[RMDB]
RNA sequence: GGGAACGACUCGAGUAGAGUCGAAAAGAUAUGGAGGAUAUAGAGAGCGACGAUCUAUAAGAAUCGGAAACGAUUCAUAGGGAGCUCGAUUGUAUCCUCCUAAGUCAAAGACAUCUUCGGAUGUCAAUCAAUCUUUUACGUUCGCGUAAAAGAUUGAAAAAGAAACAACAACAACAAC
Reactivity to 2A3 in 0.01 (KOAc 150mM, MgCl2 10mM, bicine 150mM(pH8.5), 24C), signal-to-noise 1, nucleotides 027 to 126: g010a050u080a050u180g000g000a010g030g020a010u000a010u010a030g300a030g010a010g080c020g300a300c010g010a050u000c010u010a030u030a250a300g000a010a010u010c000g010g010a100a050a000c000g000a010u020u000c010a000u010a010g000g010g000a010g010c020u010c000g020a000u000u240g010u020a010u000c000c000u000c000c000u000a000a000g010u000c020a000a090a000g020a000c010a020u010c050u080u120c300g150g010a000u040g000u000c000a000a060
Reactivity to DMS in 0.01 (KOAc 150mM, MgCl2 10mM, bicine 150mM(pH8.5), 24C), signal-to-noise 2, nucleotides 027 to 126: g020a060u000a300u010g000g010a030g010g000a030u000a000u000a020g000a300g000a030g060c010g030a090c300g030a040u000c000u020a010u000a100a110g000a020a000u000c000g000g010a100a130a180c000g000a030u000u000c010a070u000a000g000g010g000a030g000c010u000c000g000a210u010u010g020u000a000u000c000c000u000c010c010u000a020a030g030u010c010a100a150a120g000a020c000a010u000c010u000u010c260g020g000a020u000g020u000c000a100a130